[RMDB]
RNA sequence: GGGAACGACUCGAGUAGAGUCGAAAAAGUCUACUUUUCGAAGUAGACUGUGCUCCCACUUGAUCGAGGUCUCACCCUGUCAUUGCCCACGACACUCGGGCGUAAUAGAUUGGUUCGCCAAUCUAAACCAACUGAGUAAUUUCGAUUACUCAGUUGGAAAAGAAACAACAACAACAAC
Reactivity to 2A3 in 0.01 (KOAc 150mM, MgCl2 10mM, bicine 150mM(pH8.5), 24C), signal-to-noise 6, nucleotides 027 to 126: a000g000u000c000u000a000c000u050u050u030u140c200g070a010a000g000u000a000g000a000c000u000g010u060g030c010u020c000c010c010a040c040u040u170g060a090u070c070g050a020g060g080u030c030u010c060a050c010c000c000u010g030u050c030a080u010u200g020c010c010c010a050c060g100a030c030a030c090u080c060g000g020g000c010g000u030a060a080u010a070g010a000u000u010g040g020u030u050c200g050c050c000a000a000u000c000u010a020a010a000
Reactivity to DMS in 0.01 (KOAc 150mM, MgCl2 10mM, bicine 150mM(pH8.5), 24C), signal-to-noise 9, nucleotides 027 to 126: a010g000u000c000u000a000c000u000u000u010u010c140g010a010a000g010u000a000g000a010c000u000g010u010g030c170u000c010c000c010a160c150u000u000g010a080u000c050g010a070g010g010u010c030u000c090a150c060c020c020u010g000u010c050a230u000u000g000c020c010c020a170c140g000a080c070a070c120u000c080g010g000g010c040g010u000a060a110u000a020g000a010u000u000g010g010u000u010c250g010c010c000a010a010u000c000u000a020a090a230